The record gives the reactivity of an RNA of 177 nucleotides to 2A3 and DMS. The DMS profile rests on 1,266 reads. The reactions ran in a buffer of 150 mM KOAc, 10 mM MgCl2 and 150 mM bicine (pH 8.5), at 24 C. The 2A3 profile rests on 1,174 reads. For 2A3 the reverse transcriptase was SuperScript II with manganese.

[RMDB]
RNA sequence: GGGAACGACUCGAGUAGAGUCGAAAAGGUGGGAGAUAGGGUUAGCAGGAAUAACUUCUUGGGCUUCCCUGCCUCAGAGCUCCAGGCCCGGAUUCGAACUUACAAUCAGCAUUACAACAACCUGCUACCUUUACCCCAAGUUCGCUUGGGGUAAAGGAAAAGAAACAACAACAACAAC
Reactivity to 2A3 in 0.01 (KOAc 150mM, MgCl2 10mM, bicine 150mM(pH8.5), 24C), signal-to-noise 2, nucleotides 027 to 126: g020g000u040g000g040g000a080g020a090u050a070g130g020g000u110u060a000g000c020a010g050g090a030a070u130a190a020c050u040u050c020u090u220g050g000g020c010u040u050c000c030c000u000g040c030c000u080c030a090g020a030g150c020u030c020c040a030g080g000c030c000c000g000g000a050u090u140c100g050a060a040c050u090u140a050c150a080a090u130c040a020g070c000a050u150u080a070c060a160a010c000a020a020c070c010u030g010c010u010a030
Reactivity to DMS in 0.01 (KOAc 150mM, MgCl2 10mM, bicine 150mM(pH8.5), 24C), signal-to-noise 2, nucleotides 027 to 126: g010g010u000g020g020g000a130g000a110u000a070g000g010g000u010u010a050g030c000a030g000g010a110a110u000a080a080c180u010u000c030u000u000g050g020g020c010u000u000c050c030c010u000g000c020c010u010c080a110g010a130g010c030u000c030c050a070g000g010c010c010c010g020g010a080u000u010c080g000a110a100c130u000u010a070c170a040a040u020c120a040g020c100a040u020u010a050c170a040a070c140a060a140c010c010u000g000c040u000a130